This 177-nucleotide RNA was probed chemically with DMS. For DMS, 9,790 sequencing reads were counted. The reactions ran in a buffer of 150 mM KOAc, 10 mM MgCl2 and 150 mM bicine (pH 8.5), at 24 C.

RNA sequence: GGGAACGACUCGAGUAGAGUCGAAAAGUACUUCGCCCGCCGCCGGUAAAAAGGCGAUCACUGGCGUGGCUGACUGGCUGCUGUCGAAGAUGGUGGAGCUGGCCUGGUUUCCCCAGGAAAGGCCGUAGACAACAAUAAACUUCGGUUUAUUGUUGUCAAAAGAAACAACAACAACAAC
Reactivity to DMS in 0.01 (KOAc 150mM, MgCl2 10mM, bicine 150mM(pH8.5), 24C), signal-to-noise 6, nucleotides 027 to 126: g010u010a090c060u000u000c050g010c010c000c090g010c110c040g020c010c010g000g010u000a040a070a080a160a160g000g000c010g000a070u010c120a080c070u010g010g010c040g020u000g000g020c030u010g010a080c080u000g010g020c030u000g010c020u010g010u000c030g000a080a070g020a070u000g000g020u000g000g000a080g020c080u000g000g020c010c000u000g010g000u000u000u000c030c060c000c070a120g010g010a090a120a080g010g010c030c030g010u010a110